[RMDB]
RNA sequence: GGGAACGACUCGAGUAGAGUCGAAAAGGAGGCAAGUUCGCUUGCCUCCAAAGAAGCUCAAAUUGACGCAAACAUCCGCGUCAUCGCGACCAAGCGAGGAAAAAACCGUGAACUUCGGUUCACGGAAGCUAUACCAAGUGUUCGCACUUGGUAUAGCAAAAGAAACAACAACAACAAC
Reactivity to DMS in 0.01 (KOAc 150mM, MgCl2 10mM, bicine 150mM(pH8.5), 24C), signal-to-noise 4, nucleotides 027 to 126: g000g000a000g000g020c020a000a000g020u000u020c260g020c000u000u000g000c000c000u010c000c010a000a020a110g000a200a140g010c050u000c040a070a080a080u010u000g020a020c010g020c010a090a110a090c200a130u000c220c200g010c000g000u000c000a060u000c030g010c020g010a160c170c130a080a150g000c010g000a040g000g020a000a040a060a090a110a090c000c000g010u000g000a010a020c000u000u000c150g020g000u000u000c000a010c000g000g000a010a040
Reactivity to 2A3 in 0.01 (KOAc 150mM, MgCl2 10mM, bicine 150mM(pH8.5), 24C), signal-to-noise 1, nucleotides 027 to 126: g000g000a010g000g010c010a010a000g020u030u040c080g010c090u000u000g000c000c000u000c000c000a000a000a000g000a010a020g050c030u000c030a060a170a300u150u190g010a000c010g000c020a070a300a220c070a300u120c140c050g000c000g010u000c000a030u000c010g000c000g060a110c100c020a000a030g040c010g020a060g100g000a030a150a020a030a030a040c010c010g010u010g010a010a010c010u010u050c220g060g000u000u020c010a010c000g000g010a010a000

Conditions: 150 mM KOAc, 10 mM MgCl2 and 150 mM bicine (pH 8.5), 24 C. An RNA of 177 nucleotides, treated with DMS and 2A3 and read out base by base. The 2A3 profile rests on 4,014 reads. It was measured as part of the RMDB library M2PK50. For 2A3 the reverse transcriptase was SuperScript II with manganese. In probing experiments dimethyl sulfate is read out at A N1 and C N3, which are open when not base-paired. For DMS, 3,678 sequencing reads were counted.